Structure probing data (DMS and 2A3) for a 207-nucleotide construct. The reactions ran in a buffer of 150 mM KOAc, 10 mM MgCl2 and 150 mM bicine (pH 8.5), at 24 C. DMS adducts were read by reverse transcription with MarathonRT. For DMS, 2,539 sequencing reads were counted. The data come from the RNA Mapping Database (RMDB), library VIROID. Reactivities are given for positions 27 through 156. In probing experiments dimethyl sulfate is read out at A N1 and C N3, which are open when not base-paired.
RNA sequence: GGGAACGACUCGAGUAGAGUCGAAAAUGGACUCGCCGCCCAAGUUCGAGCUUGGGCCACAGUUCCGAGCGAAGAGACGCGGGUGGAAGGGAUCAGCGCCCGAGAGGGAGAAGACGGUAAAGAGCAUUGGAUCGCCGAGGGGAUGCCUCCCAAGAAGCUACUCCUUAAUCUUCGGAUUAAGGAGUAGAAAAGAAACAACAACAACAAC
Reactivity to DMS in 0.01 (KOAc 150mM, MgCl2 10mM, bicine 150mM(pH8.5), 24C), signal-to-noise 1, nucleotides 027 to 156: u020g020g020a110c030u010c040g050c070c090g000c000c010c010a060a290g020u000u000c260g030a300g030c030u000u010g000g030g020c010c030a050c130a140g000u000u010c000c000g000a030g010c050g020a130a120g030a220g010a050c030g020c160g000g010g030u000g020g010a080a100g000g010g010a050u000c050a100g000c010g030c000c000c030g000a070g000a140g020g010g000a150g000a140a050g020a090c000g010g000u000a000a010a070g000a110g030c020a170u000u000g010g000a110u000c040g070c030c040g010a130g010g000g010g000a150u000g000c020c030u000c000c000c020a070a120g000a090a220g050
Reactivity to 2A3 in 0.01 (KOAc 150mM, MgCl2 10mM, bicine 150mM(pH8.5), 24C), signal-to-noise 2, nucleotides 027 to 156: u050g000g000a030c010u000c040g010c020c010g000c000c010c000a030a000g010u060u140c110g050a050g020c010u010u010g000g000g000c000c000a110c010a000g030u070u060c000c000g000a010g000c010g030a160a120g060a050g020a080c050g000c030g050g010g020u060g010g020a030a020g030g030g000a040u060c070a000g060c010g060c110c020c010g040a080g030a030g030g020g020a060g020a010a060g050a040c080g000g000u070a090a090a040g030a000g010c080a040u060u140g060g030a050u070c050g020c050c000g000a060g000g010g000g010a020u070g030c000c010u000c000c000c000a010a050g070a050a000g010